An RNA of 177 nucleotides, treated with 2A3 and DMS and read out base by base. DMS adducts were read by reverse transcription with MarathonRT. Values cover nucleotides 27 to 126. For 2A3, 5,080 sequencing reads were counted. The RNA was probed in 150 mM KOAc, 10 mM MgCl2 and 150 mM bicine (pH 8.5) at 24 C.
RNA sequence: GGGAACGACUCGAGUAGAGUCGAAAAUCGUGCCCGUUCGCGGGCACGAGUCUCCUACACCGCUUCCAGUCUGGGCCACUACCUCUCUAUGAGAUCUCAGUAUAUUUGGUCAGUUCGCUGACCAAAAUAUCAUCCAAAAAUUCGUUUUUGGAUGAUAAAAAGAAACAACAACAACAAC
Reactivity to 2A3 in 0.01 (KOAc 150mM, MgCl2 10mM, bicine 150mM(pH8.5), 24C), signal-to-noise 3, nucleotides 027 to 126: u010c010g000u000g020c000c030c000g020u040u040c280g010c000g080g020g050c000a000c000g000a000g010u000c020u000c010c000u050a060c040a040c030c040g040c060u070u000c020c020a050g010u010c030u040g020g020g030c010c000a050c030u060a050c010c010u030c010u000c020u050a100u160g040a030g010a090u030c050u040c050a040g080u090a110u020a100u300u040u020g030g000u010c000a000g000u020u070c170g020c070u010g000a010c000c000a000a000a000a000
Reactivity to DMS in 0.01 (KOAc 150mM, MgCl2 10mM, bicine 150mM(pH8.5), 24C), signal-to-noise 6, nucleotides 027 to 126: u000c010g020u000g000c000c000c000g030u000u010c190g020c020g030g000g010c000a010c000g000a010g000u000c120u000c000c030u000a070c110a100c070c050g010c040u000u000c020c020a080g000u010c030u000g010g000g000c050c030a060c060u000a060c060c020u000c010u000c050u010a070u000g010a130g000a070u000c030u000c040a130g010u010a110u010a130u000u000u010g010g000u000c000a020g010u010u010c210g010c000u000g000a010c000c000a000a000a030a120